[RMDB]
RNA sequence: GGGAACGACUCGAGUAGAGUCGAAAAUGUAUGCAUGUGCAUUCAUGAAGGGUAGAGACAUGAUGAAUGUUCUCACCUGAGUUAGAACCAAACCCAGCGCAGGCAGCUGCCCUGAGCUUUGUUAUUAGUAUAUUAGCACCUUCGGGUGCUAAUAUACAAAAGAAACAACAACAACAAC
Reactivity to DMS in 0.01 (KOAc 150mM, MgCl2 10mM, bicine 150mM(pH8.5), 24C), signal-to-noise 2, nucleotides 027 to 126: u010g010u000a000u000g020c020a160u020g030u010g010c010a020u000u000c040a010u000g000a160a180g020g000g020u010a150g010a030g000a020c000a000u000g010a170u020g010a200a010u000g000u010u000c000u000c010a080c000c010u000g000a070g010u010u000a130g000a170a190c060c050a070a070a090c040c050c020a020g010c180g010c000a030g000g020c140a160g010c130u000g010c060c030c000u010g010a030g000c030u010u000u010g010u000u010a160u010u000a210
Notes: Conditions: 150 mM KOAc, 10 mM MgCl2 and 150 mM bicine (pH 8.5), 24 C. The record gives the reactivity of an RNA of 177 nucleotides to DMS. For DMS, 1,487 sequencing reads were counted.